[RMDB]
RNA sequence: GGGAACGACUCGAGUAGAGUCGAAAACGCAGGUAGGAGCAUCGACUCAACACCGUCGCGAGGCGAACAUCGCGGACCGACAGGCCGUCUAUCAGCUCGGCGACUGUGGCGCCAGAUCGCAGGGUGAAUCAACCUAGCUCUUCGGAGCUAGGUUGAUAAAAGAAACAACAACAACAAC
Reactivity to 2A3 in 0.01 (KOAc 150mM, MgCl2 10mM, bicine 150mM(pH8.5), 24C), signal-to-noise 1, nucleotides 027 to 126: c010g000c010a010g040g070u160a090g020g090a050g010c040a110u050c020g070a110c010u040c050a000a060c020a030c030c000g100u040c030g000c000g040a030g050g000c060g000a050a020c060a100u070c020g000c000g060g010a100c020c010g010a060c030a040g040g000c020c080g000u030c010u030a140u090c080a040g010c020u000c000g050g010c050g040a050c030u040g040u080g000g030c020g060c000c020a050g010a050u030c000g050c010a020g000g000g090u110g050a040
Reactivity to DMS in 0.01 (KOAc 150mM, MgCl2 10mM, bicine 150mM(pH8.5), 24C), signal-to-noise 2, nucleotides 027 to 126: c090g010c030a040g020g010u000a030g040g000a110g010c040a080u010c080g020a120c040u020c090a120a100c060a100c070c020g040u010c040g050c030g000a090g000g000c030g010a030a090c140a030u010c070g000c030g000g000a110c090c000g000a130c150a090g000g010c060c010g000u000c120u000a080u000c130a090g030c050u000c020g010g000c010g000a030c080u000g010u020g010g000c050g010c050c000a090g000a080u000c010g010c050a110g010g010g000u000g020a090
Conditions: 150 mM KOAc, 10 mM MgCl2 and 150 mM bicine (pH 8.5), 24 C. An RNA of 177 nucleotides, treated with 2A3 and DMS and read out base by base. Values are in units of 0.01, from 0 to 300, in steps of 10. For DMS, 1,156 sequencing reads were counted. The 2A3 profile rests on 1,193 reads.